[RMDB]
RNA sequence: GGGAACGACUCGAGUAGAGUCGAAAAACAAGGGCAAGCAGUAGAAACCAUGCGUGCUUGCUAGAGCUGGAAAUGAUGCUGGUAGCAUUGCAUGGUUCAGGGAUCACAGAUCUCGUGCCAAAGGAGAAACGUGACCAAAAUUCGUUUUGGUCACGUUAAAAGAAACAACAACAACAAC
Reactivity to DMS in 0.01 (KOAc 150mM, MgCl2 10mM, bicine 150mM(pH8.5), 24C), signal-to-noise 5, nucleotides 027 to 126: a070c060a120a130g030g000g010c010a060a080g000c160a110g030u000a110g010a130a040a020c010c000a000u000g020c010g010u000g000c010u010u020g020c010u020a040g010a040g000c050u020g000g030a200a190a150u030g000a060u070g000c000u000g000g000u000a040g010c000a010u010u030g020c010a010u000g020g010u020u000c040a110g000g000g000a010u000c010a140c180a130g000a010u020c000u000c020g010u000g000c000c030a060a080a110g000g000a150g010a080
Reactivity to 2A3 in 0.01 (KOAc 150mM, MgCl2 10mM, bicine 150mM(pH8.5), 24C), signal-to-noise 6, nucleotides 027 to 126: a000c110a030a080g080g000g010c040a070a080g020c020a080g060u280a030g100a090a040a010c000c000a000u000g000c000g010u000g000c010u050u110g000c000u010a010g010a000g090c070u070g100g120a080a120a130u260g060a080u170g060c020u010g010g010u010a010g000c000a000u040u300g000c000a000u000g000g000u000u000c000a020g000g000g000a000u030c010a020c050a300g020a030u000c000u010c010g070u050g020c000c020a080a030a020g090g040a080g090a030